Structure probing data (2A3 and DMS) for a 177-nucleotide construct. Reactivities are given for positions 27 through 126. For 2A3 the reverse transcriptase was SuperScript II with manganese. The RNA was probed in 150 mM KOAc, 10 mM MgCl2 and 150 mM bicine (pH 8.5) at 24 C. For DMS, 12,015 sequencing reads were counted.

RNA sequence: GGGAACGACUCGAGUAGAGUCGAAAACACAUUCUAUUCGUAGAAUGUGGAACGUACAGAGAUCGACAGCGUCGCAGCUAUGUCGAACGAGGAAGAGCGCGCAGGGAUCGGGCUUCGGCCCGAUCAACUAUUAAAGUUGCUUCGGCAACUUUAAUAGAAAAGAAACAACAACAACAAC
Reactivity to 2A3 in 0.01 (KOAc 150mM, MgCl2 10mM, bicine 150mM(pH8.5), 24C), signal-to-noise 3, nucleotides 027 to 126: c000a000c010a000u010u020c000u010a040u070u090c160g080u040a010g000a020a000u000g010u020g000g010a070a010c040g040u080a050c030a050g140a000g020a160u050c020g020a010c000a010g020c010g080u140c090g060c140a080g010c010u100a100u240g030u030c020g010a080a040c030g040a050g080g050a090a070g020a040g060c050g020c000g000c050a060g070g140g000a000u000c000g000g000g010c020u050u080c200g100g010c000c000c000g000a000u000c000a000a010
Reactivity to DMS in 0.01 (KOAc 150mM, MgCl2 10mM, bicine 150mM(pH8.5), 24C), signal-to-noise 8, nucleotides 027 to 126: c000a010c000a010u000u000c000u000a020u000u010c160g030u000a010g000a010a000u000g010u000g010g010a090a060c110g010u000a090c110a090g010a190g010a080u000c020g000a020c020a040g000c030g000u000c270g010c160a130g000c020u000a070u010g010u000c010g010a020a100c080g000a140g010g000a050a040g000a050g010c040g010c060g020c140a060g000g010g000a020u000c000g020g010g020c000u000u010c210g030g000c000c000c010g000a000u000c010a050a130